[RMDB]
RNA sequence: GGGAACGACUCGAGUAGAGUCGAAAACGCUCCUAGGGGUGAUGGAACAGAAGCGAUGGUGCUUGCCGUUCCAUGGUUUAAUUCAGAUGAUGAAUUCAAUAUUGGCGGCGCAGCUUUGGGUGUAUAAGCGCGCAUACGUAUUCGUACGUAUGCGCGCAAAAGAAACAACAACAACAAC
Reactivity to 2A3 in 0.01 (KOAc 150mM, MgCl2 10mM, bicine 150mM(pH8.5), 24C), signal-to-noise 1, nucleotides 027 to 126: c060g000c050u120c020c000u090a010g100g000g040g000u050g110a000u000g010g110a110a000c140a150g060a010a000g000c000g150a120u290g010g070u300g000c000u030u060g020c000c000g000u010u100c000c000a000u040g010g000u060u000u000a030a000u050u000c000a010g110a100u260g000a020u060g000a300a030u030u050c030a020a000u000a080u300u280g000g000c000g030g080c020g000c000a000g120c100u120u050u020g140g050g000u050g000u070a180u000a160a000
This 177-nucleotide RNA was probed chemically with 2A3.
The RNA was probed in 150 mM KOAc, 10 mM MgCl2 and 150 mM bicine (pH 8.5) at 24 C.
Source: RMDB library OK1LIB, as collected in RNAgym.
Values cover nucleotides 27 to 126.
Values are in units of 0.01, from 0 to 300, in steps of 10.
2A3 adducts were read by reverse transcription with SuperScript II with manganese.